[RMDB]
RNA sequence: GGGAACGACUCGAGUAGAGUCGAAAAGAUAUGGAAUGCAACUGAUAACCGUAGUCAAGAACUACGACUUACAUCGGAAACGAUGUAAAGUCGCUUGAGCUACGGUUAUCAGUUGCAUUCCUAAGUCCCUUUUUAUUCUGUUCGCAGAAUAAAAAGGAAAAGAAACAACAACAACAAC
Reactivity to DMS in 0.01 (KOAc 150mM, MgCl2 10mM, bicine 150mM(pH8.5), 24C), signal-to-noise 2, nucleotides 027 to 126: g000a120u000a280u010g000g000a020a030u000g000c010a010a010c000u000g030a010u000a000a000c000c000g000u000a010g030u000c010a020a030g020a150a090c230u020a300c020g000a000c000u010u000a020c000a000u000c000g000g000a190a100a220c000g000a020u000g020u000a020a040a080g020u000c000g010c000u010u000g000a100g000c000u000a000c000g020g010u000u000a000u000c000a010g000u000u000g020c010a000u000u000c000c000u000a000a040g010u000c060
Structure probing data (DMS) for a 177-nucleotide construct. It was measured as part of the RMDB library TTRINS. The RNA was probed in 150 mM KOAc, 10 mM MgCl2 and 150 mM bicine (pH 8.5) at 24 C.